[RMDB]
RNA sequence: GGGAACGACUCGAGUAGAGUCGAAAAAGAGUACCGUAUCGCUACGGCGAUACGGUACUCAUUCGCAGUAUAUCCCUGUGAGUUUGCUACUUUUCAAUGGUCAAAUCACAGGAGUAUACUGUGAGAAUGGUUUACCUUCGUUCGCGAAGGUAAACCAAAAAGAAACAACAACAACAAC
Reactivity to 2A3 in 0.01 (KOAc 150mM, MgCl2 10mM, bicine 150mM(pH8.5), 24C), signal-to-noise 2, nucleotides 027 to 126: a010g010a000g000u000a000c000c000g030u010a010u000c000g000c000u010a030c300g180g000c000g000a000u000a000c000g010g010u000a000c010u000c000a000u000u000c000g000c000a010g000u000a000u000a000u030c020c010c010u020g010u000g080a250g030u000u100u000g050c000u090a090c080u170u240u010u200c120a200a300u300g010g000u050c000a000a000a000u000c000a000c000a000g000g010a050g040u000a000u000a000c000u000g000u020g000a020g000a000a010
An RNA of 177 nucleotides, treated with 2A3 and read out base by base. Conditions: 150 mM KOAc, 10 mM MgCl2 and 150 mM bicine (pH 8.5), 24 C.